[RMDB]
RNA sequence: GGGAACGACUCGAGUAGAGUCGAAAAGGCUUGGACAGAACCUUCGCGAUCGUCCCUCUCUUGCUUGCGCGCUCCUUCUUCCAUAAGCUUCACUUUUACCGUUUCGAAUGUCGGCAGCGUGUCGCGAUACCAGUACUGACUUCGGUCAGUACUGGUAAAAAGAAACAACAACAACAAC
Reactivity to 2A3 in 0.01 (KOAc 150mM, MgCl2 10mM, bicine 150mM(pH8.5), 24C), signal-to-noise 2, nucleotides 027 to 126: g040g040c060u080u080g040g030a050c050a090g070a100a100c020c000u030u090c050g030c020g110a080u080c030g070u000c000c010c000u020c000u000c000u000u110g020c010u070u090g000c040g000c000g000c000u050c010c000u020u030c010u040u030c040c010a090u030a170a090g000c000u070u060c030a050c030u030u080u060u110a090c040c030g030u030u040u030c060g070a140a050u050g100u130c010g040g000c060a000g050c050g100u050g040u030c000g030c000g010a000
Reactivity to DMS in 0.01 (KOAc 150mM, MgCl2 10mM, bicine 150mM(pH8.5), 24C), signal-to-noise 2, nucleotides 027 to 126: g000g020c030u000u000g040g020a110c110a110g000a100a130c030c010u000u000c050g020c040g000a090u000c070g010u000c040c010c010u000c050u000c040u010u000g020c050u000u000g030c040g000c080g020c020u000c020c060u000u000c030u010u000c000c040a050u000a080a100g030c050u000u010c050a080c070u010u010u000u000a110c080c060g030u000u000u000c060g000a100a090u000g000u010c030g000g040c050a080g030c180g030u010g050u000c060g060c070g000a150
This 177-nucleotide RNA was probed chemically with 2A3 and DMS. Values are in units of 0.01, from 0 to 300, in steps of 10. Source: RMDB library OK2TST, as collected in RNAgym. DMS (dimethyl sulfate) methylates the pairing face of unpaired adenines and cytosines. Reactivities are given for positions 27 through 126.